[RMDB]
RNA sequence: GGGAACGACUCGAGUAGAGUCGAAAAAGUGUCUCGGACAGCGGUUCGAUUCCGCUCAGCUCCAUUCCCCCGACCCACCGCCCCGCCGGCGGUGCGUCAUCCCGGGGCUGCAAUGGUUUCGACGGGGUAUUCACUGCUUGUUCGCAAGCAGUGAAUAAAAAGAAACAACAACAACAAC
Reactivity to 2A3 in 0.01 (KOAc 150mM, MgCl2 10mM, bicine 150mM(pH8.5), 24C), signal-to-noise 4, nucleotides 027 to 126: a000g140u100g030u050c030u020c050g030g040a050c030a020g000c020g020g040u050u030c030g030a030u050u060c000c000g000c000u010c010a010g000c010u000c000c010a070u030u040c010c000c000c000c030g000a010c050c030c000a000c000c000g010c020c010c010c020g280c050c010g010g000c000g000g000u000g000c010g000u000c000a060u020c000c010c000g000g020g010g010c000u010g000c030a050a160u080g060g000u020u030u070c020g000a020c020g030g010g000g000
Reactivity to DMS in 0.01 (KOAc 150mM, MgCl2 10mM, bicine 150mM(pH8.5), 24C), signal-to-noise 4, nucleotides 027 to 126: a100g040u010g010u020c020u000c020g030g000a120c120a070g010c050g020g000u020u000c140g000a300u020u010c010c000g000c020u000c030a020g020c020u000c000c000a300u020u010c020c010c010c070c100g010a030c020c030c000a020c020c000g000c010c010c080c260g020c230c120g040g030c010g020g020u000g010c280g000u000c030a080u020c030c030c020g010g000g000g000c000u010g010c210a070a060u020g010g010u010u000u000c020g010a050c040g000g030g000g000